[RMDB]
This 177-nucleotide RNA was probed chemically with 2A3 and DMS.
For DMS, 3,185 sequencing reads were counted.
For 2A3, 820 sequencing reads were counted.
The RNA was probed in 150 mM KOAc, 10 mM MgCl2 and 150 mM bicine (pH 8.5) at 24 C.
DMS adducts were read by reverse transcription with MarathonRT.
RNA sequence: GGGAACGACUCGAGUAGAGUCGAAAAACCAUUCUCAGAAUCAUGUGUUCAUUUCUAUCCUGUUGGGGUUAGUGGCCAAAAUAGAAGGUUGGUGUGGGGUGGGGAGCUGCUUUGUGCUCAAAAGCUGUACCUAGAUGCUAUUCGUAGCAUCUAGGUAAAAAGAAACAACAACAACAAC
Reactivity to 2A3 in 0.01 (KOAc 150mM, MgCl2 10mM, bicine 150mM(pH8.5), 24C), signal-to-noise 2, nucleotides 027 to 126: a010c010c000a040u170u030c050u030c010a060g120a150a100u040c030a050u160g060u000g040u120u080c010a010u080u000u140c040u080a120u020c000c010u100g120u300u040g060g000g050g000u020u070a050g050u160g070g040c010c020a090a050a060a010u140a040g220a290a030g140g060u150u070g010g020u150g020u090g080g000g000g070u210g000g000g030g020a080g000c030u030g000c030u060u130u040g080u040g000c000u050c040a080a090a020a000g010c050u070g020
Reactivity to DMS in 0.01 (KOAc 150mM, MgCl2 10mM, bicine 150mM(pH8.5), 24C), signal-to-noise 3, nucleotides 027 to 126: a070c040c010a210u020u000c050u010c070a080g000a160a080u000c050a040u000g010u000g010u000u000c030a060u000u010u000c080u020a090u000c010c000u000g010u000u000g010g000g000g010u010u000a050g020u000g010g020c030c060a050a050a090a080u000a110g010a090a090g020g000u000u010g000g010u010g010u000g000g000g010g010u010g000g000g010g010a070g000c070u000g010c040u000u010u000g000u010g020c060u000c130a080a060a070a070g010c050u000g000